[RMDB]
RNA sequence: GGGAACGACUCGAGUAGAGUCGAAAAAUGGUGACGCCGUGCGGACCUAUCCAGCCAGGGCUGUCCUGAGCUUCGACGGGAGAAUUGACAGCAGCCCUCCAGCAGCUCAUUCGGCCUUUGAUGCCGGUCUACCUAGGGGCUUCGGCCCCUGGGUAGGAAAAGAAACAACAACAACAAC
Reactivity to 2A3 in 0.01 (KOAc 150mM, MgCl2 10mM, bicine 150mM(pH8.5), 24C), signal-to-noise 9, nucleotides 027 to 126: a000u110g020g010u020g020a030c030g010c020c020g020u040g000c020g010g010a040c000c010u010a050u010c010c010a000g030c000c010a010g010g010g000c020u020g040u020c000c030u010g010a020g010c010u040u040c020g070a060c040g030g040g020a050g040a040a100u100u070g050a020c010a020g020c010a010g010c010c000c000u030c010c010a020g020c010a000g000c010u010c020a090u150u100c010g020g010c010c010u110u140u220g070a080u090g010c000c010g020g000
Reactivity to DMS in 0.01 (KOAc 150mM, MgCl2 10mM, bicine 150mM(pH8.5), 24C), signal-to-noise 9, nucleotides 027 to 126: a070u020g000g010u000g000a090c060g010c020c040g010u030g000c110g000g000a060c040c030u010a090u020c040c030a080g000c000c080a060g000g010g010c030u010g000u010c050c040u000g000a140g000c030u000u010c050g010a130c200g010g000g000a080g010a090a110u020u020g000a100c090a070g000c040a100g000c040c020c010u000c040c040a070g010c050a080g000c030u010c040a090u010u030c010g000g010c010c030u010u020u010g000a100u030g010c010c010g000g010